[RMDB]
RNA sequence: GGGAACGACUCGAGUAGAGUCGAAAAGCACAACAUCAACAUCGCCCGCACCGUGCCGGACAACAUGGGCAUGUUGUUCCGCAAGCAUUUGGUGAUGUUCGGGCCGCGGGAGGUGCUACUCACCAGCUACAGUAACACGUUUCGACGUGUUACUGUAAAAAGAAACAACAACAACAAC
Reactivity to 2A3 in 0.01 (KOAc 150mM, MgCl2 10mM, bicine 150mM(pH8.5), 24C), signal-to-noise 3, nucleotides 027 to 126: g030c020a030c030a040a230c010a220u150c040a000a090c020a070u130c060g000c000c000c010g040c000a020c010c020g010u000g020c020c000g030g000a010c010a010a030c010a020u100g120g300g000c160a030u000g050u000u000g040u160u050c000c010g000c060a100a010g000c000a020u120u110u300g050g000u030g010a040u110g120u100u080c020g000g040g020c030c010g000c010g030g020g000a040g000g050u000g010c000u040a080c050u030c010a090c040c000a020g010c040
Reactivity to DMS in 0.01 (KOAc 150mM, MgCl2 10mM, bicine 150mM(pH8.5), 24C), signal-to-noise 4, nucleotides 027 to 126: g010c020a030c040a080a070c100a100u000c110a140a120c060a070u010c170g020c000c000c010g000c030a050c010c000g010u010g030c020c060g000g000a040c010a010a030c020a020u000g020g060g030c180a070u000g020u000u000g000u010u000c000c080g000c160a120a100g000c020a040u000u010u010g010g000u010g000a030u000g000u010u020c050g010g000g010c060c100g010c150g000g020g040a080g000g010u000g010c020u010a060c110u010c040a120c080c050a130g010c210